This 177-nucleotide RNA was probed chemically with DMS and 2A3. For DMS the reverse transcriptase was MarathonRT. The RNA was probed in 150 mM KOAc, 10 mM MgCl2 and 150 mM bicine (pH 8.5) at 24 C. Reactivities are rounded to 0.1 and cut off at 0 and 3.

RNA sequence: GGGAACGACUCGAGUAGAGUCGAAAAUAGGCGGAUGCCUUGGCUUCUAGAGACGAUGAAGGACGUGAUAAGCUGCGAUAAGUUACGGUAAGCUGCUAUAUGCUUUGACCCGUAAAUUUCCGAAUGGUAAUUAAUUUCAUUUCGAUGAAAUUAAUUAAAAAGAAACAACAACAACAAC
Reactivity to DMS in 0.01 (KOAc 150mM, MgCl2 10mM, bicine 150mM(pH8.5), 24C), signal-to-noise 9, nucleotides 027 to 126: u010a040g010g010c010g010g010a080u030g010c010c010u000u000g000g010c070u000u010c040u010a110g010a120g010a080c090g000a080u010g000a150a130g000g000a050c030g010u010g010a080u010a090a160g010c020u000g000c030g010a060u010a030a060g010u000u000a020c020g000g000u000a050a050g000c020u000g000c050u080a110u010a060u020g000c010u010u010u020g000a090c300c000c010g000u000a010a030a080u000u010u000c010c010g000a100a090u020g000g010
Reactivity to 2A3 in 0.01 (KOAc 150mM, MgCl2 10mM, bicine 150mM(pH8.5), 24C), signal-to-noise 9, nucleotides 027 to 126: u140a010g030g000c040g090g070a080u170g010c000c000u000u040g040g010c010u040u000c020u080a060g010a020g010a130c050g060a050u090g060a070a050g020g000a000c010g010u010g020a030u030a120a040g000c020u010g000c020g030a050u020a100a020g020u020u020a010c010g000g020u010a020a020g000c000u010g000c020u070a060u030a020u280g010c000u140u100u070g030a040c000c010c000g000u010a020a030a050u020u010u000c000c000g050a070a070u110g100g010